An RNA of 207 nucleotides, treated with 2A3 and read out base by base. The data come from the RNA Mapping Database (RMDB), library OK3TST. The reactions ran in a buffer of 150 mM KOAc, 10 mM MgCl2 and 150 mM bicine (pH 8.5), at 24 C.

RNA sequence: GGGAACGACUCGAGUAGAGUCGAAAAGCGUAUGCGACCCUCAGCCGCAGUCAGUACCGCGUGCGCACGCUCUGGCGCCGCAAGUGCUGAGCUGGGUGACUGGUUGGAUACCGGACGCCCAUCGGUACCGAUUUCCUGAAUCUUCAACCCGGCAACGGCAUGCCGCAUUUUUCGAAAUGCGGCAUGCAAAAGAAACAACAACAACAAC
Reactivity to 2A3 in 0.01 (KOAc 150mM, MgCl2 10mM, bicine 150mM(pH8.5), 24C), signal-to-noise 1, nucleotides 027 to 156: g020c090g030u150a020u220g010c000g020a010c010c000c020u020c110a020g010c020c010g150c080a020g020u030c000a000g030u000a030c000c050g000c010g060u150g090c000g090c010a110c170g050c050u160c110u150g070g000c000g010c010c010g030c020a240a000g020u000g030c000u010g050a060g000c020u020g000g000g000u010g010a020c100u040g000g000u020u010g040g040a030u050a070c010c020g010g010a060c020g040c010c000c000a130u110c030g000g030u040a050c030c000g020a040u000u080u080c040c040u010g060a130a100u070c130u130u060c060a110a090c010c010c010g000g010c000a030a060c010g010